[RMDB]
RNA sequence: GGGAACGACUCGAGUAGAGUCGAAAAUUGCAAUUCAUAAUAACUUUGUCACAAGCAUACUUCAUAAUGUCUGCAGGUACGUGUUCAAACUUCUUAGCAUACACUCUUGCUUUGAAAGCUAAGUCUUUCUGUGUCAGGUGGCUUUGCUUCGCUGUGCAUAACAUCCCCAGUUCGCUGGGGAUGUUAUAAAAGAAACAACAACAACAAC
Reactivity to DMS in 0.01 (KOAc 150mM, MgCl2 10mM, bicine 150mM(pH8.5), 24C), signal-to-noise 1, nucleotides 027 to 156: u000u000g000c040a080a140u010u000c080a110u020a100a110u010a110a100c020u000u000u000g030u000c040a080c070a070a110g060c010a130u000a020c080u000u000c060a100u000a050a100u000g000u000c020u000g020c040a060g020g010u010a050c070g060u000g000u000u000c100a120a070a030c050u000u000c010u000u000a020g050c030a030u000a090c110a070c070u000c060u020u000g000c010u000u000u010g000a070a020a060g030c050u000a020a100g020u000c060u000u000u000c040u000g030u030g010u000c040a130g030g000u010g000g060c090u010u000u000g000c040u000u000c070g020c050u020g000u000g000c100
Reactivity to 2A3 in 0.01 (KOAc 150mM, MgCl2 10mM, bicine 150mM(pH8.5), 24C), signal-to-noise 2, nucleotides 027 to 156: u110u080g020c040a040a060u080u090c030a050u120a220a030u080a140a110c120u090u080u100g100u080c010a020c020a150a060g000c020a030u040a080c010u040u070c020a050u070a230a060u110g040u040c050u030g000c030a010g040g040u030a020c070g070u070g040u060u080c070a070a020a030c020u020u020c000u070u050a010g060c010a010u020a120c000a050c120u080c010u030u070g060c000u030u020u110g090a110a020a000g000c040u060a070a050g030u020c010u050u130u030c010u040g050u010g110u150c010a040g000g050u010g000g050c010u110u040u030g000c000u020u060c010g000c060u040g000u030g060c000